Background
An RNA of 207 nucleotides, treated with DMS and 2A3 and read out base by base. The reactions ran in a buffer of 150 mM KOAc, 10 mM MgCl2 and 150 mM bicine (pH 8.5), at 24 C. Reactivities are rounded to 0.1 and cut off at 0 and 3. The 2A3 profile rests on 893 reads.
RNA sequence: GGGAACGACUCGAGUAGAGUCGAAAACCGAAGCCCCCUUGAGGGAUAAUACAGGCUCUCCCAUCCAACUCCUAUUCCAACACGUCCUCGUCGUACAGAGUGGUAACAUGUGUCACCACAUAUCCAACAUAGUGUCGCAUCUUCGGAUGCGACACAAUCAAAUUUUGAUGUUCGCAUCAAAAUUUGAAAAAGAAACAACAACAACAAC
Reactivity to DMS in 0.01 (KOAc 150mM, MgCl2 10mM, bicine 150mM(pH8.5), 24C), signal-to-noise 1, nucleotides 027 to 156: c010c000g010a180a170g000c020c010c010c020c000u000u000g010a190g070g000g030a130u020a060a070u010a110c070a180g010g000c080u000c070u000c010c020c030a210u020c070c040a100a030c030u000c040c010u010a090u010u000c040c020a050a090c090a050c060g020u010c020c020u010c040g010u000c040g000u000a080c080a020g020a200g050u000g000g080u000a020a080c020a180u000g020u020g020u020c040a000c000c000a020c040a110u020a040u040c040c010a040a070c070a110u000a130g040u010g040u000c020g050c010a000u000c070u000u020c300g000g000a000u000g000c000g010a010c000a000c000a020a050
Reactivity to 2A3 in 0.01 (KOAc 150mM, MgCl2 10mM, bicine 150mM(pH8.5), 24C), signal-to-noise 2, nucleotides 027 to 156: c020c000g060a170a050g040c040c040c010c000c080u070u080g020a150g060g000g010a030u080a070a030u110a150c060a020g040g010c000u000c000u010c040c010c000a040u030c030c030a030a030c010u050c030c010u050a040u080u040c030c000a020a020c030a040c090g040u060c020c020u020c010g080u020c020g000u080a050c020a010g140a030g060u010g000g040u030a050a010c040a090u150g050u030g040u100c010a010c050c020a020c010a010u070a040u040c000c010a010a080c020a170u170a110g000u000g010u010c000g020c000a000u010c010u020u030c150g140g000a000u000g000c000g020a000c000a000c000a000a000